[RMDB]
RNA sequence: GGGAACGACUCGAGUAGAGUCGAAAACGGACACCGCCGUGUGCCCGGCCCACAAGUGGAGGCUUCGAACUCCCACCUGACCGCCCCCUGGGGCGGCGGGUCACCGGUCAGACGGUCCCGUCCCGAGUUUAGUAACCAAAUUCGUUUGGUUACUAAAAAAAGAAACAACAACAACAAC
Reactivity to DMS in 0.01 (KOAc 150mM, MgCl2 10mM, bicine 150mM(pH8.5), 24C), signal-to-noise 6, nucleotides 027 to 126: c050g000g010a060c060a080c220c220g000c030c040g020u010g020u000g000c060c000c000g000g000c250c100c100a110c100a020a000g030u040g010g010a010g010g010c040u030u050c270g000a100a060c010u000c000c000c000a030c010c000u000g000a170c000c010g010c000c000c000c040c220u040g010g000g010g020c000g000g000c000g000g000g000u000c100a070c020c000g000g000u000c040a050g000a040c020g010g000u010c100c010c010g000u000c000c000c000g010a110g010
Reactivity to 2A3 in 0.01 (KOAc 150mM, MgCl2 10mM, bicine 150mM(pH8.5), 24C), signal-to-noise 9, nucleotides 027 to 126: c010g000g020a030c050a050c120c060g030c010c010g030u160g050u000g020c010c000c000g010g020c070c120c020a150c040a030a060g050u240g200g000a010g010g020c060u170u140c230g060a090a020c000u010c020c000c000a010c000c000u130g170a300c000c000g000c000c010c000c000c090u290g020g000g000g000c000g000g000c000g000g000g000u000c010a020c010c000g000g000u010c010a000g010a120c000g010g020u040c010c010c000g030u020c000c000c010g010a020g000